[RMDB]
RNA sequence: GGGAACGACUCGAGUAGAGUCGAAAAAUUGAUUGAACUUUAAUUUUCGGAUAAUCCCAUUCUCAGGAAUACGCUUCCUAUAUUUUGGAAUUUGCUAAAUUUCAGGCGGACUAUCAAUCAUUUAGAUUAUUGGUUCUUAUUUCGAUAAGAACCAAUAAAAAGAAACAACAACAACAAC
Reactivity to DMS in 0.01 (KOAc 150mM, MgCl2 10mM, bicine 150mM(pH8.5), 24C), signal-to-noise 3, nucleotides 027 to 126: a040u030u000g010a030u010u010g000a050a100c160u010u030u010a040a060u030u010u000u010c080g020g020a080u030a060a090u000c010c010c000a230u020u000c030u010c150a080g010g000a050a050u020a080c130g000c070u010u020c010c020u000a070u010a080u020u020u020u010g000g000a020a020u000u010u030g010c130u020a030a030a060u000u010u000c020a030g010g000c060g000g000a050c100u010a030u000c010a010a020u010c010a050u010u000u000a080g010a180u000
Reactivity to 2A3 in 0.01 (KOAc 150mM, MgCl2 10mM, bicine 150mM(pH8.5), 24C), signal-to-noise 7, nucleotides 027 to 126: a000u040u040g020a010u010u030g010a030a040c050u070u110u170a100a100u110u050u060u080c070g050g020a020u050a090a080u090c010c000c000a040u100u020c050u020c050a020g010g040a010a040u060a060c110g020c080u030u020c010c010u040a050u010a040u180u120u050u030g020g020a040a020u050u010u150g070c050u110a100a050a060u020u050u050c020a020g030g000c030g070g030a030c030u060a060u130c010a010a020u000c000a020u060u110u080a120g040a130u000